[RMDB]
RNA sequence: GGGAACGACUCGAGUAGAGUCGAAAAUUGAUAGUUACGACAAAGCUUACUAUGUCGGUACUGACUCCAAAGAAUCUGGUGUUAUCCAGGGUGAGUUGAUCGCCAAACAUUGGAAAGCUAAUCCAAAGGUAGAACCAGUUUUCGAACUGGUUCUACCAAAAGAAACAACAACAACAAC
Reactivity to 2A3 in 0.01 (KOAc 150mM, MgCl2 10mM, bicine 150mM(pH8.5), 24C), signal-to-noise 1, nucleotides 027 to 126: u080u060g050a050u040a210g070u120u180a020c070g020a000c060a050a120a010g070c020u080u060a040c020u010a020u050g000u000c010g010g040u040a010c010u010g020a010c000u000c010c040a240a000a000g060a070a090u100c030u000g000g000u060g040u260u140a070u050c010c000a020g050g040g100u240g020a010g000u090u100g070a070u060c050g000c050c000a020a300a050c010a020u030u040g030g070a170a020a020g040c040u020a080a050u020c030c020a060a040a000
Reactivity to DMS in 0.01 (KOAc 150mM, MgCl2 10mM, bicine 150mM(pH8.5), 24C), signal-to-noise 3, nucleotides 027 to 126: u010u010g010a130u010a090g010u000u020a120c090g020a080c070a060a180a080g020c060u000u010a150c060u010a040u010g010u010c200g010g000u000a060c030u020g000a030c010u020c000c020a130a120a140g020a100a170u020c030u000g000g010u000g020u010u010a060u000c000c000a030g000g000g010u030g010a030g010u000u000g000a060u010c130g010c030c020a070a100a080c060a030u010u010g000g000a060a020a020g000c050u010a090a100u010c040c070a050a090a100
Notes:
The data come from the RNA Mapping Database (RMDB), library OK2TST. This 177-nucleotide RNA was probed chemically with 2A3 and DMS. For 2A3, 860 sequencing reads were counted. DMS adducts were read by reverse transcription with MarathonRT. For 2A3 the reverse transcriptase was SuperScript II with manganese.